[RMDB]
RNA sequence: GGGAACGACUCGAGUAGAGUCGAAAAUUCCCUUCCUCCCCUCCGGCCCUUCCUCGACUCGGGUUGGCUCAUCCUCGGCGAGGGCGACGGUCCUCAGUUCUCUCUAUUCUUUCUUGAAAGAGGAGACGUAUCUUUAAUGCUUCGGCAUUAAAGAUACAAAAGAAACAACAACAACAAC
Reactivity to DMS in 0.01 (KOAc 150mM, MgCl2 10mM, bicine 150mM(pH8.5), 24C), signal-to-noise 2, nucleotides 027 to 126: u000u000c000c000c000u000u000c020c000u000c010c000c010c010u010c050c010g030g010c030c020c030u000u000c030c000u010c030g010a060c060u000c060g040g000g000u010u000g010g020c080u000c090a110u000c040c010u000c040g000g000c110g010a030g010g020g010c050g000a110c180g020g000u000c030c000u010c080a140g000u000u000c050u010c010u000c040u010a150u010u000c040u000u000u010c060u010u000g000a010a160a040g010a060g000g000a040g020a120c230
Reactivity to 2A3 in 0.01 (KOAc 150mM, MgCl2 10mM, bicine 150mM(pH8.5), 24C), signal-to-noise 1, nucleotides 027 to 126: u000u010c020c000c000u010u040c000c010u020c020c000c000c010u010c000c000g000g020c010c000c010u000u020c010c000u030c040g030a060c030u000c050g040g010g000u010u020g030g040c020u020c020a090u040c000c010u050c010g060g030c040g030a010g000g020g020c030g010a030c090g070g020u000c000c000u010c020a050g020u110u010c010u000c000u000c010u020a160u120u030c020u050u070u050c020u030u110g090a050a020a010g050a010g020g000a010g000a010c030